[RMDB]
RNA sequence: GGGAACGACUCGAGUAGAGUCGAAAAUUGUUAAUUUAAGGCAAAUAUUAACACAGGAUGCAGAUAUUUUCUGCAGGUUCUAUGCAGAAACACAAACAUUCAAGAGCUCUCUCCUUGGGAAAGUCGGCCGAUAAUUAAGAUUCGUCUUAAUUAUCGGAAAAGAAACAACAACAACAAC
Reactivity to 2A3 in 0.01 (KOAc 150mM, MgCl2 10mM, bicine 150mM(pH8.5), 24C), signal-to-noise 3, nucleotides 027 to 126: u080u020g000u000u020a000a050u070u010u110a110a040g080g000c000a020a100a130u140a030u060u050a030a000c020a000c020a050g060g010a020u020g000c020a030g070a140u080a110u160u100u030u020c000u000g000c000a010g030g030u140u060c060u110a060u020g000c000a000g010a050a040a010c070a000c010a060a160a010c010a020u030u050c020a070a010g030a060g070c000u010c000u010c000u000c010c020u040u060g060g010g050a030a080a030g060u040c010g010g020
Reactivity to DMS in 0.01 (KOAc 150mM, MgCl2 10mM, bicine 150mM(pH8.5), 24C), signal-to-noise 5, nucleotides 027 to 126: u000u010g010u010u000a000a020u010u010u010a100a110g010g010c110a090a080a090u000a020u000u000a020a020c000a060c260a150g010g010a030u000g000c040a080g010a140u000a080u000u000u000u000c000u000g010c000a010g000g020u010u000c150u000a060u000g010c010a020g010a020a020a040c230a050c110a100a090a090c050a030u010u000c040a080a090g020a150g010c040u000c030u000c050u000c030c030u000u010g000g000g000a070a070a100g020u000c040g010g020